[RMDB]
RNA sequence: GGGAACGACUCGAGUAGAGUCGAAAAAUGAAUUCACUUCAUAUGACUAUGAUGUAAAACACAAGAAAUACAGUAGUCAAGAGGUUCUCAAGAGCAUGCUCUUGCUUGAUGACUUCAUUGUGUACAGCCUCACCAUACGUUUCGACGUAUGGUGAGGAAAAGAAACAACAACAACAAC
Reactivity to DMS in 0.01 (KOAc 150mM, MgCl2 10mM, bicine 150mM(pH8.5), 24C), signal-to-noise 2, nucleotides 027 to 126: a050u000g000a070a000u000u000c060a060c050u000u000c000a070u010a230u000g000a060c060u000a000u000g020a140u000g000u020a010a120a110a130c110a100c270a120a110g000a070a040a070u000a030c060a100g000u000a010g000u000c020a000a110g000a020g000g000u000u000c100u000c030a020a040g010a030g000c060a090u000g020c030u000c040u000u000g000c150u000u010g000a110u010g000a040c160u010u000c000a020u000u000g000u000g020u000a120c200a070g010
Reactivity to 2A3 in 0.01 (KOAc 150mM, MgCl2 10mM, bicine 150mM(pH8.5), 24C), signal-to-noise 3, nucleotides 027 to 126: a000u050g040a000a030u100u080c050a020c030u010u030c020a040u130a130u270g060a010c040u040a010u100g150a100u030g080u100a080a150a170a010c090a010c030a120a040g050a100a110a020u090a040c030a030g020u010a000g000u010c010a000a030g010a010g040g010u220u000c020u000c040a000a010g020a000g050c060a090u180g040c040u040c010u040u030g020c010u090u110g080a130u140g000a060c000u040u020c030a060u040u070g060u030g050u040a080c040a060g070